The record gives the reactivity of an RNA of 177 nucleotides to 2A3 and DMS.
For 2A3, 1,912 sequencing reads were counted.
Source: RMDB library RFM100, as collected in RNAgym.
2A3 adducts were read by reverse transcription with SuperScript II with manganese.

[RMDB]
RNA sequence: GGGAACGACUCGAGUAGAGUCGAAAAUUUCUUCCAGAUCUUUCCGGCUUUUUAUUAUUUAACUUUCGUUCAGCACACUAAACAUCCCGUCUCGCAUCCCCUUAACUGGCUGUUUAACCUGAUAAAGUGAUUCAAUAUCGUUCGCGAUAUUGAAUCAAAAAGAAACAACAACAACAAC
Reactivity to 2A3 in 0.01 (KOAc 150mM, MgCl2 10mM, bicine 150mM(pH8.5), 24C), signal-to-noise 4, nucleotides 027 to 126: u050u050u000c010u100u030c020c010a060g000a120u020c030u010u040u040c040c020g000g020c020u040u050u120u070u110a160u170u080a130u070u200u070a100a080c040u040u120u090c000g040u030u020c010a020g030c040a030c000a010c040u090a040a110a010c040a040u040c020c000c000g040u010c020u000c030g050c010a070u070c000c010c010c000u020u030a060a010c030u020g010g010c010u000g020u030u040u040a040a010c020c000u030g040a090u080a160a130a000g080
Reactivity to DMS in 0.01 (KOAc 150mM, MgCl2 10mM, bicine 150mM(pH8.5), 24C), signal-to-noise 2, nucleotides 027 to 126: u000u010u030c050u000u010c090c080a130g000a010u000c010u010u030u000c020c020g010g000c060u000u000u010u010u000a030u040u030a100u040u020u020a060a100c140u030u020u000c010g020u000u000c000a080g000c050a050c100a040c080u020a030a050a120c080a060u010c010c000c040g000u020c030u020c040g000c020a100u000c010c010c050c040u000u050a150a070c090u000g010g020c020u000g000u000u010u020a030a180c080c040u000g000a070u030a030a170a070g030